[RMDB]
RNA sequence: GGGAACGACUCGAGUAGAGUCGAAAAGACCAGGUGGGUCAAAGAACUGCAGUGACUGGAACAGUGAUCCUAGUCUAUUUGUUGAGAAGUUUUUUGUUCCUCAACAUCUCAUGGGUUUAGCUAUAGGCUUUUAUCAUACGUUCGCGUAUGAUAAAAGAAAAGAAACAACAACAACAAC
Reactivity to 2A3 in 0.01 (KOAc 150mM, MgCl2 10mM, bicine 150mM(pH8.5), 24C), signal-to-noise 6, nucleotides 027 to 126: g050a010c000c020a030g020g100u100g020g030g000u030c010a050a040a000g040a050a010c040u060g030c070a050g040u020g130a030c020u040g000g040a070a070c050a130g070u050g160a080u010c010c020u040a020g010u010c040u090a080u060u130u080g050u020u070g040a050g030a120a080g040u020u010u020u010u130u160g080u080u120c000c000u020c020a020a040c010a040u010c030u040c040a090u100g050g040g000u040u080u130a030g000c030u060a050u110a200g130g000
Reactivity to DMS in 0.01 (KOAc 150mM, MgCl2 10mM, bicine 150mM(pH8.5), 24C), signal-to-noise 4, nucleotides 027 to 126: g000a140c010c030a100g010g000u020g010g000g000u020c030a060a070a060g010a040a050c030u010g000c030a090g010u020g000a030c020u000g000g000a060a060c070a110g030u040g000a090u000c000c010u020a070g000u010c040u040a030u030u010u010g010u000u000g010a060g000a050a080g000u000u000u000u030u030u030g020u010u020c040c000u000c050a020a050c070a040u010c030u000c110a060u020g000g000g000u000u010u000a090g010c060u010a140u030a070g020g010

Structure probing data (2A3 and DMS) for a 177-nucleotide construct. Source: RMDB library OK1LIB, as collected in RNAgym. Reactivities are given for positions 27 through 126. The 2A3 profile rests on 5,124 reads. The RNA was probed in 150 mM KOAc, 10 mM MgCl2 and 150 mM bicine (pH 8.5) at 24 C.